[RMDB]
RNA sequence: GGGAACGACUCGAGUAGAGUCGAAAAACAGCGUUCGCGCUGUCAUAGAGGGGUCUAAGCUGACUCCCGAAGAACGUGAACUACAGCUGAAGCCUCCACGGCUGCACGGGAGGGAGAGCUUAGACGGAGGCACCCGAUACUGUCCAUUCGUGGACAAGUUUGUAAAUUAUUUCGAUAAUUUACAAACAAAAGAAACAACAACAACAAC
Reactivity to 2A3 in 0.01 (KOAc 150mM, MgCl2 10mM, bicine 150mM(pH8.5), 24C), signal-to-noise 9, nucleotides 027 to 156: a000c010a000g010c010g040u090u120c160g030c010g010c090u010g020u040c030a100u160a110g180a120g040g010g010g000u000c000u000a000a000g000c000u020g230a300c020u030c000c000c000g100a130a010g000a010a000c000g000u010g020a070a080c120u240a100c270a000g000c010u020g020a030a000g010c000c000u000c000c000a030c030g020g000c000u010g010c010a000c010g010g000g010a010g000g000g000a020g000a000g000c000u000u000a000g010a010c010g000g000a000g000g000c000a000c000c000c000g020a030u080a190c100u100g000u000c010c000a040u060u100c210g110u090g010g000a010c010a020a030
Reactivity to DMS in 0.01 (KOAc 150mM, MgCl2 10mM, bicine 150mM(pH8.5), 24C), signal-to-noise 2, nucleotides 027 to 156: a010c000a030g030c010g030u010u000c260g070c070g060c010u000g000u000c050a130u020a110g010a110g020g020g000g010u000c000u000a030a050g030c020u010g010a240c010u020c000c010c010g030a170a130g020a210a190c020g040u010g020a060a100c050u030a300c020a040g000c040u010g000a040a100g010c010c000u000c000c010a300c050g020g000c000u010g000c070a020c110g020g010g010a040g000g000g000a090g010a130g020c020u000u000a060g020a070c010g000g010a040g090g030c040a080c000c030c010g000a120u000a040c040u010g010u010c000c000a100u000u000c220g050u010g000g000a030c000a230a100